[RMDB]
RNA sequence: GGGAACGACUCGAGUAGAGUCGAAAAUCGGUCGAGAAGCGCUCCGAACAGCGGCUGGGGUUCACCGCGCGGCGCGCAGCGAUCCUCGCCGCGGUUGUAUGCGUGCUGACGCUGACCAUUGCGAGGCCUGUGAAAAGGCCUUCGGGCCUUUUCACAGAAAAGAAACAACAACAACAAC
Reactivity to DMS in 0.01 (KOAc 150mM, MgCl2 10mM, bicine 150mM(pH8.5), 24C), signal-to-noise 2, nucleotides 027 to 126: u010c110g030g040u000c030g010a070g010a230a100g000c010g000c010u000c090c100g000a020a060c060a050g010c010g000g010c040u010g000g010g010g020u000u010c040a060c010c040g010c010g020c000g010g020c140g030c010g030c000a020g010c050g000a010u000c000c010u000c010g010c000c010g030c010g000g000u000u000g020u010a070u000g000c130g030u000g030c090u000g000a190c210g020c060u010g000a050c010c020a100u010u010g020c140g020a170g000g010c150